Chemical mapping of a 177-nucleotide RNA with 2A3 and DMS.

RNA sequence: GGGAACGACUCGAGUAGAGUCGAAAAAGGCAUUACUAGUCAGUGCGACGUACCUUGACGGUACUGGAUUUCGCCCUUGGGUUAGGUUCGUCAGCAGGACUUAGCGGUAGUUUCCAAUUGGGCACACUAGGUAGAAGUGAUUCGUCACUUCUACCUAAAAAGAAACAACAACAACAAC
Reactivity to 2A3 in 0.01 (KOAc 150mM, MgCl2 10mM, bicine 150mM(pH8.5), 24C), signal-to-noise 7, nucleotides 027 to 126: a020g080g000c040a050u080u060a060c050u060a030g040u050c020a050g050u030g060c030g030a020c040g030u010a020c000c010u060u190g160a070c110g020g030u040a030c020u090g030g060a100u090u100u080c060g020c000c000c000u040u080g090g000g000u030u050a010g030g000u000u010c000g070u060c070a070g020c030a070g050g020a020c010u020u050a010g010c030g020g070u060a060g030u030u070u050c000c000a020a050u150u110g020g020g000c040a020c000a000c050
Reactivity to DMS in 0.01 (KOAc 150mM, MgCl2 10mM, bicine 150mM(pH8.5), 24C), signal-to-noise 7, nucleotides 027 to 126: a080g010g000c040a040u000u020a070c090u020a060g010u020c060a040g010u000g010c030g020a100c080g000u000a000c000c010u010u030g010a100c170g020g000u010a020c020u020g010g010a120u010u030u030c110g020c020c020c010u010u010g010g010g010u010u010a040g000g010u010u010c020g020u010c100a110g020c100a120g000g000a020c030u000u010a050g010c080g010g000u010a060g010u000u010u000c010c020a060a110u020u020g000g010g020c030a060c130a070c170

For DMS, 24,754 sequencing reads were counted. DMS adducts were read by reverse transcription with MarathonRT. For 2A3 the reverse transcriptase was SuperScript II with manganese. Conditions: 150 mM KOAc, 10 mM MgCl2 and 150 mM bicine (pH 8.5), 24 C. Values cover nucleotides 27 to 126.